[RMDB]
RNA sequence: GGGAACGACUCGAGUAGAGUCGAAAAGAAAUGCAUGUAAAUGCAUAUAAAAUAGCAUCAGGUACAUAGUAAGUGCCCAAUAAAUGUUAAUUAUAUUUUGUAUGCUAUAGUAGUAGUAGGAGAGAACAUCGAUUACCCUUUUCGAAGGGUAAUCGAUAAAAGAAACAACAACAACAAC
Reactivity to DMS in 0.01 (KOAc 150mM, MgCl2 10mM, bicine 150mM(pH8.5), 24C), signal-to-noise 1, nucleotides 027 to 126: g000a060a140a030u020g020c000a010u000g000u010a100a120a040u010g000c000a040u010a030u010a060a060a090a030u000a010g010c010a010u000c130a090g010g060u010a000c010a060u000a130g020u010a120a070g000u010g000c000c000c060a070a120u010a050a050a020u000g000u000u000a030a130u000u000a100u000a010u000u000u000u010g000u000a040u000g010c000u010a080u010a080g020u000a070g000u010a110g040u010a080g000g020a080g000a060g020a120a120c190
Reactivity to 2A3 in 0.01 (KOAc 150mM, MgCl2 10mM, bicine 150mM(pH8.5), 24C), signal-to-noise 1, nucleotides 027 to 126: g050a000a140a000u020g040c020a010u060g000u220a180a000a000u090g000c040a000u030a000u030a000a090a000a000u010a000g000c040a030u040c040a000g000g010u050a020c050a040u190a100g060u140a300a050g050u000g040c000c000c020a160a070u170a200a110a020u030g010u040u100a120a100u260u070a150u030a040u130u030u110u000g000u000a030u010g000c000u000a030u030a120g050u050a010g000u030a000g010u020a040g110g140a050g010a000g000a110a030c040